[RMDB]
RNA sequence: GGGAACGACUCGAGUAGAGUCGAAAAGGACUGCGCAGUCCGGCAACAUCAGCAGAAAGCCCGCUAUACGUGACGGAUUGGCUGAAGCGUACAGAAAUAUUGAGCCUCCUGCAAGAGGCAGCCAAGCAAAACGUACGUGAGUUCGCUCACGUACGAAGCUAUCUUCCCAGUUCGCUGGGAAGAUAGCAAAAGAAACAACAACAACAAC
Reactivity to 2A3 in 0.01 (KOAc 150mM, MgCl2 10mM, bicine 150mM(pH8.5), 24C), signal-to-noise 3, nucleotides 027 to 156: g010g000a020c010u070g010c150g020c110a010g000u000c000c000g020g020c000a040a040c020a120u170c000a010g020c010a030g130a080a040a020g080c000c010c000g000c020u080a050u010a130c070g020u030g050a030c030g010g080a120u030u050g010g000c000u010g000a050a020g010c000g030u050a030c010a020g150a080a120a010u270a120u140u170g020a020g020c020c010u010c010c060u110g090c060a080a070g010a000g030g010c000a000g000c000c000a010a010g020c040a000a070a040a060c010g000u010a000c000g000u000g000a010g010u030u110c200g020c110u010c000a000c000g000u000a000c000g000a000a000
Reactivity to DMS in 0.01 (KOAc 150mM, MgCl2 10mM, bicine 150mM(pH8.5), 24C), signal-to-noise 2, nucleotides 027 to 156: g010g040a030c010u020g030c230g000c090a220g040u020c010c030g000g020c010a090a090c050a090u000c030a110g000c010a090g010a050a040a110g030c010c010c010g030c060u000a090u010a070c050g020u010g020a170c050g020g000a270u010u010g000g080c000u000g000a070a300g030c050g000u000a110c030a070g020a110a080a210u000a150u010u010g010a150g000c000c010u000c030c000u000g000c110a090a210g000a110g010g050c000a030g010c020c010a070a030g010c080a050a090a070a140c030g030u000a000c060g010u020g020a050g000u000u000c230g000c010u010c000a010c000g010u010a000c010g000a010a130